[RMDB]
Source: RMDB library OK1LIB, as collected in RNAgym. An RNA of 177 nucleotides, treated with 2A3 and read out base by base. High 2A3 reactivity points to a flexible backbone, as in loops and unpaired stretches. The RNA was probed in 150 mM KOAc, 10 mM MgCl2 and 150 mM bicine (pH 8.5) at 24 C. Reactivities are rounded to 0.1 and cut off at 0 and 3.
RNA sequence: GGGAACGACUCGAGUAGAGUCGAAAACUGUACUAGCUGUCCCAGUGCUUUGCCUGUUCUAUACAGUAGGUUUACCUGAAAAUCUGCCUCUUAUUCUGCCAUGGGACAAAAUGCUGAAUUUUGGCAGCCAUGCGCUCCACUUCGGUGGAGCGCAUGGAAAAGAAACAACAACAACAAC
Reactivity to 2A3 in 0.01 (KOAc 150mM, MgCl2 10mM, bicine 150mM(pH8.5), 24C), signal-to-noise 1, nucleotides 027 to 126: c000u010g040u060a070c010u010a000g000c000u000g140u030c000c040c000a060g050u090g020c070u280u230u300g000c020c020u030g060u090u050c010u020a080u060a030c030a010g030u010a090g040g080u150u150u040a070c010c010u060g130a000a000a000a180u010c000u000g000c000c000u070c010u070u040a010u120u000c010u010g190c170c010a020u050g030g000g000a010c020a000a160a030a030u070g000c000u020g000a060a080u000u000u010u070g070g000c010a010g020